[RMDB]
This 177-nucleotide RNA was probed chemically with DMS and 2A3. The reactions ran in a buffer of 150 mM KOAc, 10 mM MgCl2 and 150 mM bicine (pH 8.5), at 24 C. For DMS the reverse transcriptase was MarathonRT. Source: RMDB library TTRDEL, as collected in RNAgym. 2A3 adducts were read by reverse transcription with SuperScript II with manganese. Values cover nucleotides 27 to 126.

RNA sequence: GGGAACGACUCGAGUAGAGUCGAAAAGAUAUGGAGAAAGUGGAGGAACUACACGCCUGCUCGGAAACGAGCGGGGACGUGCCGUUGAAACUUUCUCCUAAGUCAAAUCCAGCCUUCGGGCUGGAAAGAUCUAUAUAUACUUCGGUAUAUAUAGAUCAAAAGAAACAACAACAACAAC
Reactivity to DMS in 0.01 (KOAc 150mM, MgCl2 10mM, bicine 150mM(pH8.5), 24C), signal-to-noise 6, nucleotides 027 to 126: g010a040u000a300u010g000g010a010g000a010a010a010g010u000g010g010a160g010g000a100a040c090u010a230c020a010c000g000c000c000u000g020c000u000c000g000g000a060a090a110c000g000a010g010c000g000g000g000g010a040c010g000u000g000c020c070g000u010u010g000a230a140a020c010u000u000u000c000u000c000c000u000a000a070g000u010c030a080a130a150u000c000c010a000g010c000c010u000u010c230g020g010g010c000u000g000g000a000a030a110
Reactivity to 2A3 in 0.01 (KOAc 150mM, MgCl2 10mM, bicine 150mM(pH8.5), 24C), signal-to-noise 5, nucleotides 027 to 126: g010a010u050a020u080g010g010a000g010a010a010a010g020u020g030g040a060g050g040a130a090c110u260a070c300a000c020g050c000c000u010g020c000u000c000g000g020a030a050a020c000g000a000g010c070g000g000g010g040a060c010g000u010g090c030c030g090u140u030g000a010a010a000c000u000u000u000c000u000c000c000u010a020a000g000u010c010a000a010a120u010c000c010a000g010c010c010u070u100c300g160g010g000c000u000g000g000a030a010a000